[RMDB]
RNA sequence: GGGAACGACUCGAGUAGAGUCGAAAAGACAGCCCUCUUGAAUGGAAGCCUCUGGGUGGCUGUUGGCAGUGCGUGGCACACAACACAAUGAAUGUCUACAUAAACAUUAAUUAGCACCAGUUAAUGAACUCUAAGCUGAGUUCGCUCAGCUUAGAGUAAAAGAAACAACAACAACAAC
Reactivity to 2A3 in 0.01 (KOAc 150mM, MgCl2 10mM, bicine 150mM(pH8.5), 24C), signal-to-noise 1, nucleotides 027 to 126: g030a000c010a030g010c010c050c000u000c020u020u170g120a080a080u180g090g070a050a070g070c010c010u000c070u030g010g000g120u130g050g010c020u010g020u070u000g030g000c030a020g000u050g070c060g110u140g010g080c020a030c020a000c010a070a010c020a020c010a050a060u100g060a130a020u050g080u060c020u080a100c030a110u150a080a120a000c000a010u010u080a030a000u020u090a060g000c020a040c050c000a010g020u010u040a020a090u060g020a010
Reactivity to DMS in 0.01 (KOAc 150mM, MgCl2 10mM, bicine 150mM(pH8.5), 24C), signal-to-noise 2, nucleotides 027 to 126: g000a040c080a140g040c000c020c050u000c030u010u000g000a100a030u010g010g010a130a130g010c120c100u000c010u020g000g000g000u010g050g030c030u010g030u000u000g000g030c090a090g020u000g000c070g000u010g010g010c000a060c030a080c030a030a030c080a060c150a090a060u000g000a070a020u000g010u000c000u000a070c160a070u010a130a060a140c020a020u000u000a030a040u000u000a070g010c070a050c060c040a050g020u000u020a010a030u010g020a080